[RMDB]
Source: RMDB library M2RFPK, as collected in RNAgym.
This 207-nucleotide RNA was probed chemically with 2A3 and DMS.
RNA sequence: GGGAACGACUCGAGUAGAGUCGAAAACCUAUCCAAAAUGAGAUCCCAUCUUGCACAGUGUGCUAAUUUGAGAUUCUCAUGCCUCCUACUUGGAGAGAUCUGGACUAGAAGUCAGGGCAUCUGACUCAAUACAUUCGUCAGUUCGCUGACGAAUGAACUCAUGCCAUAGGUUCGCCUAUGGCAUGAGAAAAGAAACAACAACAACAAC
Reactivity to 2A3 in 0.01 (KOAc 150mM, MgCl2 10mM, bicine 150mM(pH8.5), 24C), signal-to-noise 7, nucleotides 027 to 156: c000c000u010a040u060c020c010a040a050a000a080u010g000a000g000a000u000c010c010c000a000u000c010u010u030g010c020a080c130a300g140u130g010u010g260c060u180a050a040u020u010u010g020a020g000a020u280u100c000u000c000a010u030g010c000c000u010c000c000u120a280c140u160u270g010g000a010g000a010g010a070u040c080u100g020g010a020c020u040a060g020a150a000g080u000c010a010g020g040g230c070a110u090c090u000g010a000c010u000c030a050a060u090a110c000a000u000u000c000g000u000c000a000g030u000u130c180g030c110u000g000a000c000g000a000a000u000g000a010a000
Reactivity to DMS in 0.01 (KOAc 150mM, MgCl2 10mM, bicine 150mM(pH8.5), 24C), signal-to-noise 3, nucleotides 027 to 156: c010c020u020a100u000c030c030a040a090a110a170u000g010a030g000a050u000c010c010c000a030u010c110u000u000g010c000a030c020a290g050u010g050u010g020c000u000a020a020u000u000u000g020a030g000a050u000u000c020u000c010a030u000g000c080c020u000c020c000u000a150c180u000u010g010g000a060g020a130g010a050u010c050u000g000g000a150c150u010a150g000a150a030g000u000c040a030g010g020g050c170a130u030c010u010g000a040c010u000c020a080a120u010a150c010a040u010u000c010g020u010c000a020g030u000u010c300g010c010u000g020a020c000g000a010a000u000g010a070a160

The RNA was probed in 150 mM KOAc, 10 mM MgCl2 and 150 mM bicine (pH 8.5) at 24 C. For 2A3 the reverse transcriptase was SuperScript II with manganese.